An RNA of 177 nucleotides, treated with 2A3 and DMS and read out base by base. Values are in units of 0.01, from 0 to 300, in steps of 10.
RNA sequence: GGGAACGACUCGAGUAGAGUCGAAAAGCAAGAUGCUUCGGCAUCUUGCAGUCGUAGCGCGAUCGACAGAAUUACAGCUAUGUCGAACGAGGAAGUGCGCGCACAUCAUCCCUUUCGAGGGAUGAAAAGAGAAAGUCAUGUUCGCAUGACUUUCUCUAAAAGAAACAACAACAACAAC
Reactivity to 2A3 in 0.01 (KOAc 150mM, MgCl2 10mM, bicine 150mM(pH8.5), 24C), signal-to-noise 1, nucleotides 027 to 126: g010c000a000a020g000a020u010g000c000u040u130c180g100g000c010a000u000c000u000u030g000c010a000g030u020c040g020u030a030g030c020g000c000g010a050u030c000g000a000c000a020g120a020a070u230u110a190c070a060g050c160u090a040u050g020u000c010g020a030a050c030g000a080g070g190a100a070g070u060g080c010g010c000g060c000a030c010a000u010c010a020u010c000c000c000u020u090u080c220g110a000g000g010g000a020u000g000a030a010a010
Reactivity to DMS in 0.01 (KOAc 150mM, MgCl2 10mM, bicine 150mM(pH8.5), 24C), signal-to-noise 3, nucleotides 027 to 126: g010c000a000a010g000a000u000g000c000u000u000c220g040g020c010a030u010c010u010u000g010c000a040g010u000c050g010u010a080g000c010g010c000g000a240u000c010g010a030c000a030g010a200a130u000u010a110c300a140g000c080u010a110u010g020u000c010g000a020a060c030g010a140g010g010a110a060g000u010g010c010g010c000g000c050a120c250a100u000c000a010u000c000c000c000u000u000u000c140g020a010g020g000g000a000u000g010a000a040a080
Record summary: Conditions: 150 mM KOAc, 10 mM MgCl2 and 150 mM bicine (pH 8.5), 24 C.